The data come from the RNA Mapping Database (RMDB), library M2PK50. This 177-nucleotide RNA was probed chemically with DMS and 2A3.
RNA sequence: GGGAACGACUCGAGUAGAGUCGAAAACUCAAGGCCUUCGGGCCUUGAGAAAAGGCAUCGUAUCUUUGCUUCGAUGCCAAACAUGAAACAUGAAAGCAGAGAAAAGUUUUGGGUUCGCCCAAAACAACCUAGUCUUAUAGUUCGCUAUAAGACUAGGAAAAGAAACAACAACAACAAC
Reactivity to DMS in 0.01 (KOAc 150mM, MgCl2 10mM, bicine 150mM(pH8.5), 24C), signal-to-noise 5, nucleotides 027 to 126: c000u010c010a000a000g010g020c000c060u000u010c200g040g010g020c000c000u010u000g000a010g000a020a050a110a170g000g000c000a010u010c000g000u000a030u010c010u000u000u000g010c020u000u000c000g000a010u000g000c000c000a020a040a070c070a110u000g010a100a120a110c180a070u000g000a040a070a020g050c000a000g010a010g000a170a110a090a110g000u000u000u000u000g010g000g010u000u010c220g010c000c010c000a000a000a000a000c010a070a100
Reactivity to 2A3 in 0.01 (KOAc 150mM, MgCl2 10mM, bicine 150mM(pH8.5), 24C), signal-to-noise 6, nucleotides 027 to 126: c000u000c000a000a000g010g000c000c060u140u200c300g070g000g000c010c000u000u020g000a000g000a000a030a000a000g000g000c000a000u000c010g010u030a040u120c010u000u020u020g000c000u010u000c000g000a000u000g000c000c000a010a020a000c060a060u170g070a060a070a010c040a020u140g100a100a030a010g000c010a000g010a000g000a060a050a040a070g000u000u010u000u000g020g010g010u030u070c200g100c010c000c030a000a010a000a000c000a000a010
Values cover nucleotides 27 to 126. The 2A3 profile rests on 22,357 reads. The RNA was probed in 150 mM KOAc, 10 mM MgCl2 and 150 mM bicine (pH 8.5) at 24 C.